[RMDB]
RNA sequence: GGGAACGACUCGAGUAGAGUCGAAAAGGGCUUUUGUGCCGUAAAGCGCCCUGGCAUUGCCUGAGGAUAGACGAGGAAGCACACGUCCCUCCCCAGCAAGACUCCGCUUUCUUUUGGGGCCUGCAGGGUCUCAUCUUUACUUCGGUAAAGAUGAGACAAAAGAAACAACAACAACAAC
Reactivity to 2A3 in 0.01 (KOAc 150mM, MgCl2 10mM, bicine 150mM(pH8.5), 24C), signal-to-noise 2, nucleotides 027 to 126: g040g010g000c030u000u130u140u170g010u010g000c000c000g020u020a070a090a040g060c030g040c030c030c000u030g000g000c070a230u080u300g000c010c010u090g010a270g060g040a050u140a300g070a100c130g060a080g020g090a090a040g000c000a010c000a020c070g100u150c000c000c020u000c000c020c000c000a000g000c000a020a040g000a070c000u060c030c060g010c020u060u150u140c000u050u160u080u130g000g000g010g030c000c010u100g010c030a070g220g020
Reactivity to DMS in 0.01 (KOAc 150mM, MgCl2 10mM, bicine 150mM(pH8.5), 24C), signal-to-noise 2, nucleotides 027 to 126: g010g000g010c040u000u010u020u000g050u000g000c000c000g030u000a150a090a130g010c050g000c010c000c030u000g000g020c030a100u010u040g000c040c030u000g010a130g000g000a100u010a070g010a110c050g000a180g020g040a210a180g020c030a070c070a070c220g000u000c000c010c030u000c010c000c010c040a080g040c090a040a030g000a080c050u010c020c040g010c200u000u000u010c120u000u000u000u000g000g010g010g000c010c040u000g030c070a090g000g030